[RMDB]
RNA sequence: GGGAACGACUCGAGUAGAGUCGAAAAGCAAUAUCGAACAGAGUAGAGCCUAUCAAGUCUGCGGCAUGAAAAAAAGCGCGAUGUAAGUAAAGGAGGGGGAAUAUUUACAUCGCGUUGCCAACUUAUGCCUCCUACUCUCAUUCGUGAGAGUAGGAGGAAAAGAAACAACAACAACAAC
Reactivity to 2A3 in 0.01 (KOAc 150mM, MgCl2 10mM, bicine 150mM(pH8.5), 24C), signal-to-noise 5, nucleotides 027 to 126: g030c020a030a080u040a040u190c050g050a070a040c040a090g050a010g120u170a020g030a010g020c000c000u110a110u130c070a100a020g090u020c010u040g030c010g010g000c020a040u110g120a070a020a030a070a030a000a010g020c000g010c010g000a000u000g000u000a010a010g000u010a090a110a190g160g090a160g050g080g000g000g040a060a010u020a010u030u000u000a000c000a000u000c000g000c000g000u010u000g000c000c000a000a040c010u070u060a050u260g040
Reactivity to DMS in 0.01 (KOAc 150mM, MgCl2 10mM, bicine 150mM(pH8.5), 24C), signal-to-noise 2, nucleotides 027 to 126: g000c080a030a150u070a020u020c070g000a080a150c050a070g000a080g010u010a110g000a060g040c030c030u010a070u010c090a070a150g000u010c020u000g000c100g010g000c010a080u010g000a000a010a050a050a030a100a050g000c000g010c000g010a000u000g000u000a000a000g040u010a060a090a180g080g000a140g050g000g000g000g000a240a300u000a000u010u000u010a000c000a000u000c000g050c000g030u000u000g000c120c040a040a090c050u060u010a040u150g000